[RMDB]
RNA sequence: GGGAACGACUCGAGUAGAGUCGAAAACAAUGAUGAGCAAUUCGCUAUUGCCGCCUAAAAACGGUUAGCCGGGGCUGCUAGAGCCUUGUUACCAAAGAUAGCCGGCGGGGACUUCGGUCCCCCUCGUUGAAGGGCUGUACGUUCGCGUACAGCCCAAGAUAUGUGCAUGCUUCGGCAUGCACAUAUCAAAAGAAACAACAACAACAAC
Reactivity to 2A3 in 0.01 (KOAc 150mM, MgCl2 10mM, bicine 150mM(pH8.5), 24C), signal-to-noise 2, nucleotides 027 to 156: c030a030a120u190g090a050u100g030a100g130c040a080a110u160u120c050g000c010u030a070u090u130g010c000c000g010c010c010u060a060a050a020a010a000c010g000g010u050u030a010g020c040c000g000g020g000g000c000u050g010c040u080a030g020a030g100c000c010u010u020g060u100u070a080c020c010a030a020a000g050a040u000a010g010c010c000g030g000c030g010g000g000g000a010c000u040u040c210g050g000u000c000c010c020c010c000u010c010g040u040u090g060a110a070g000g000g000c000u010g000u000a000c000g000u010u070c220g000c000g080u000a000c000a020g000c010c000c000a000a000
Record summary: Structure probing data (2A3) for a 207-nucleotide construct. The 2A3 profile rests on 1,110 reads.